RNA sequence: GGGAACGACUCGAGUAGAGUCGAAAACACCGUCAUGAGAAAGGGGGACAUUGGGUGGUGACCAGGUUGGCUUAGCAGCUGACAUGGUGUUCCCCGAUUUUGGUGUUAGUGUAUUGAGCUAACCUGGGUCGAUUUCGUCCUUCGGGAUGGAAUUGACAAAAGAAACAACAACAACAAC
Reactivity to 2A3 in 0.01 (KOAc 150mM, MgCl2 10mM, bicine 150mM(pH8.5), 24C), signal-to-noise 9, nucleotides 027 to 126: c040a020c000c000g070u080c050a100u130g060a020g070a080a050a030g010g000g000g000g010a010c010a030u040u050g070g010g000u050g000g010u030g020a050c000c000a000g010g000u000u000g000g000c000u040u090a040g030c050a010g010c030u010g000a010c010a030u040g050g000u030g020u010u000c000c000c000c000g010a000u010u030u020u100g030g000u030g000u000u010a010g000u020g020u050a160u090u230g050a000g000c000u000a000a010c000c010u010g040g010
Reactivity to DMS in 0.01 (KOAc 150mM, MgCl2 10mM, bicine 150mM(pH8.5), 24C), signal-to-noise 9, nucleotides 027 to 126: c070a080c000c010g000u030c120a100u030g010a100g010a050a070a130g010g010g010g000g010a070c080a100u020u010g000g010g020u000g000g000u010g010a150c000c010a020g000g010u000u000g000g010c000u000u000a090g010c200a100g010c010u010g000a010c020a030u010g010g010u020g000u000u000c000c000c000c010g000a020u010u010u010u010g010g010u010g000u000u000a030g010u000g010u020a140u030u020g000a060g010c020u000a020a040c010c010u000g000g010